Annotation
Conditions: 150 mM KOAc, 10 mM MgCl2 and 150 mM bicine (pH 8.5), 24 C. The record gives the reactivity of an RNA of 207 nucleotides to 2A3. For 2A3, 920 sequencing reads were counted.
RNA sequence: GGGAACGACUCGAGUAGAGUCGAAAACCGGAUUGCCUAAGGAGGGGUGAACCGGCCCAGGUCAGAAAAAGAGCAGGUCAAAACUCCCAUGCUGAUCAGUAGUGGGAUUGCGCCUGUGAAUAGCCACAGCACUCCAGCCUGGGCAACAUAGCAGGCUCAUAAAUUUGUCGUUCGCGACAAAUUUAUGAAAAGAAACAACAACAACAAC
Reactivity to 2A3 in 0.01 (KOAc 150mM, MgCl2 10mM, bicine 150mM(pH8.5), 24C), signal-to-noise 2, nucleotides 027 to 156: c010c000g000g050a240u030u020g000c000c000u120a100a020g040g020a020g000g000g000g000u020g020a080a040c050c070g020g000c000c040c020a030g020g090u160c060a040g160a160a090a090a070a020g080a030g050c000a000g090g000u070c010a020a100a070a190c080u020c010c000c000a000u020g020c010u080g060a300u200c190a020g030u190a020g120u040g000g010g000a010u010u050g030c090g000c000c020u000g020u010g010a040a060u070a030g010c000c020a040c010a040g030c000a000c030u000c000c000a030g030c060c000u000g000g000g000c000a010a010c000a030u070a000g150c050a030g080g030c020u010